An RNA of 177 nucleotides, treated with 2A3 and DMS and read out base by base. 2A3 adducts were read by reverse transcription with SuperScript II with manganese.
RNA sequence: GGGAACGACUCGAGUAGAGUCGAAAAUGCGCUUCAGGCGAAGGCUCGCCCUGCGGUUGGGCAUUAUCGAAGAUGCUGCUUGUAUCGUGGCUAUCGGCUUUAUCGCGCAUAUCGGCAUCAUCUCCGAUGGUAUGAUAUGGUUCGCCAUAUCAUACCAAAAAGAAACAACAACAACAAC
Reactivity to 2A3 in 0.01 (KOAc 150mM, MgCl2 10mM, bicine 150mM(pH8.5), 24C), signal-to-noise 6, nucleotides 027 to 126: u030g010c090g010c020u060u060c050a050g080g020c030g100a150a040g160g000c030u030c070g030c030c000c000u040g020c040g080g040u090u080g090g030g000c030a020u060u100a050u090c040g030a030a010g010a020u020g000c000u010g020c000u040u030g020u020a030u040c030g020u030g050g030c020u050a120u250c090g050g020c030u150u200u140a170u270c040g000c000g000c050a000u010a010u040c020g000g000c000a000u000c000a010u000c030u010c030c000g030a040
Reactivity to DMS in 0.01 (KOAc 150mM, MgCl2 10mM, bicine 150mM(pH8.5), 24C), signal-to-noise 6, nucleotides 027 to 126: u000g020c030g010c010u000u010c080a070g010g010c030g010a080a180g020g000c130u000c090g000c070c020c040u000g010c070g010g010u000u010g010g000g020c030a040u000u000a050u000c030g010a040a040g000a030u000g000c060u000g010c010u000u000g020u000a010u000c050g020u000g010g010c090u000a100u000c170g020g010c070u000u010u010a100u010c080g020c010g010c210a020u000a020u000c120g000g000c010a010u000c040a020u000c010u000c010c000g010a040
It was measured as part of the RMDB library OK2TST.